[RMDB]
RNA sequence: GGGAACGACUCGAGUAGAGUCGAAAAGCUUAAGGCUUAAGCCCCGAACCCACUUGUGCCUGUGCUCGUGGAUGUAGGGUCACUAUCACGGGAUCGCUGCUGGUUGCCGUCCGUCGGCCAGCGGUUAACCUAAAACGGGCUGGUCCUUCGGUGCGCUCGUACAGAGUCAGUUCGCUGACUCUGUACGAAAAGAAACAACAACAACAAC
Reactivity to 2A3 in 0.01 (KOAc 150mM, MgCl2 10mM, bicine 150mM(pH8.5), 24C), signal-to-noise 2, nucleotides 027 to 156: g010c020u140u130a100a080g220g030c010u070u050a040a030g010c030c000c000c000g000a020a040c000c000c000a010c040u050u060g000u020g020c000c010u030g020u040g020c010u000c030g030u010g010g050a040u060g000u080a080g040g060g020u070c030a100c170u170a130u280c000a010c010g040g000g000a030u060c030g000c000u020g000c010u000g020g010u020u010g000c000c000g050u040c010c000g020u030c000g000g000c000c000a000g000c020g000g000u030u040a020a040c020c090u070a070a100a050a000c020g030g000g020c020u040g040g040u080c040c020u090u160c080g060g010u070g000c040g010c040u010